Structure probing data (2A3 and DMS) for a 177-nucleotide construct.
Conditions: 150 mM KOAc, 10 mM MgCl2 and 150 mM bicine (pH 8.5), 24 C.
For 2A3, 2,014 sequencing reads were counted.
Source: RMDB library OK2TST, as collected in RNAgym.
The DMS profile rests on 6,850 reads.
For 2A3 the reverse transcriptase was SuperScript II with manganese.
[RMDB]
RNA sequence: GGGAACGACUCGAGUAGAGUCGAAAAUUUUUUUGUUGCAGGCUAUACGCCACAUCACUUAAUCGCUCAAGCCAGGGUGCACGAUCUUGAUCGUUCAGUGGCUGGCCGGCGGCCAUUUUUUGGAUAAAGCUAAUAGGAUAUUCGUAUCCUAUUAGCUAAAAGAAACAACAACAACAAC
Reactivity to 2A3 in 0.01 (KOAc 150mM, MgCl2 10mM, bicine 150mM(pH8.5), 24C), signal-to-noise 2, nucleotides 027 to 126: u110u060u010u020u010u040u200g040u010u070g000c080a070g020g000c000u030a030u010a260c120g010c000c000a000c020a020u080c000a010c030u050u180a030a040u140c050g000c020u070c110a050a000g020c000c020a030g100g020g050u030g000c030a000c040g010a010u000c020u060u130g060a010u030c000g020u030u010c010a070g030u030g210g130c000u020g010g010c000c000g000g040c000g010g040c000c000a040u160u140u070u040u140u060g060g020a070u140a140a120
Reactivity to DMS in 0.01 (KOAc 150mM, MgCl2 10mM, bicine 150mM(pH8.5), 24C), signal-to-noise 5, nucleotides 027 to 126: u000u010u010u000u000u030u000g010u000u000g010c070a110g020g010c010u000a080u010a090c170g010c000c010a150c040a040u010c040a040c090u010u000a060a080u010c060g000c040u010c060a110a100g010c040c030a060g010g010g010u010g010c140a040c020g010a030u000c050u000u010g000a030u000c030g000u000u000c060a090g020u000g010g010c060u000g010g000c020c070g000g010c040g000g010c040c050a010u000u000u010u000u010u010g010g000a120u010a080a100